[RMDB]
The record gives the reactivity of an RNA of 177 nucleotides to 2A3 and DMS. The data come from the RNA Mapping Database (RMDB), libraries RFM100 and RFMREP. 2A3 adducts were read by reverse transcription with SuperScript II with manganese. DMS adducts were read by reverse transcription with MarathonRT.
RNA sequence: GGGAACGACUCGAGUAGAGUCGAAAAACUCGGGGCGCCGAAAAUGGACGGGGCUCAAGCCGGCCGCCGAUACCCCGGGGCUCCGAAAGGAGAUCCGGUAGGGGGGCGUGCCGAUGGCGCAGAAGCCCCCCUGGAAACACUUCGGUGUUUCCAGGGGAAAAGAAACAACAACAACAAC
Reactivity to 2A3 in 0.01 (KOAc 150mM, MgCl2 10mM, bicine 150mM(pH8.5), 24C), signal-to-noise 6, nucleotides 027 to 126: a010c020u030c030g000g000g000g000c090g090c020c030g080a100a070a030a100u220g070g030a020c020g010g000g020g000c010u010c040a010a010g030c020c010g010g000c010c010g000c000c010g080a150u150a170c000c000c000c000g000g010g010g000c000u000c000c000g030a030a030a010g000g010a010g000a030u010c000c000g010g030u140a160g020g010g010g030g000g000c010g060u110g010c000c000g020a020u050g030g000c030g010c060a030g050a150a010g010c000c000
Reactivity to DMS in 0.01 (KOAc 150mM, MgCl2 10mM, bicine 150mM(pH8.5), 24C), signal-to-noise 3, nucleotides 027 to 126: a080c030u010c030g020g010g000g020c010g020c020c010g000a060a050a100a100u020g010g000a150c070g010g010g020g000c010u020c040a130a130g010c030c010g000g000c000c000g010c000c000g000a230u030a160c010c030c010c000g000g010g000g010c000u000c000c010g000a050a100a120g000g000a010g000a020u000c000c000g010g000u020a060g010g000g000g010g000g000c000g000u040g030c010c010g020a060u010g020g020c030g000c070a170g000a190a130g000c020c010